[RMDB]
RNA sequence: GGGAACGACUCGAGUAGAGUCGAAAAGAAAGUGUGCACUUGAUACCGCGUGACUUCGGUCACGUAGUGGCACCGCGCAGGACUUUGCUGCCACUGCUUAGUCCUGGGGUAUCUUGUGCUCACGAAACCUACCUGCGGUGUUCGCACCGCAGGUAGGAAAAGAAACAACAACAACAAC
Reactivity to 2A3 in 0.01 (KOAc 150mM, MgCl2 10mM, bicine 150mM(pH8.5), 24C), signal-to-noise 2, nucleotides 027 to 126: g110a020a170a030g000u000g000u000g000c000a000c020u000u010g000a000u000a010c000c010g010c000g030u000g010a000c000u050u080c260g040g020u010c000a000c030g000u030a010g000u030g270g220c090a060c070c010g010c000g000c010a010g000g010a010c000u010u020u020g010c020u060g100c050c100a080c160u080g000c000u000u010a010g000u000c000c000u000g010g000g010g010u010a000u000c000u000u000g000u000g000c040u010c000a000c000g030a030a010a000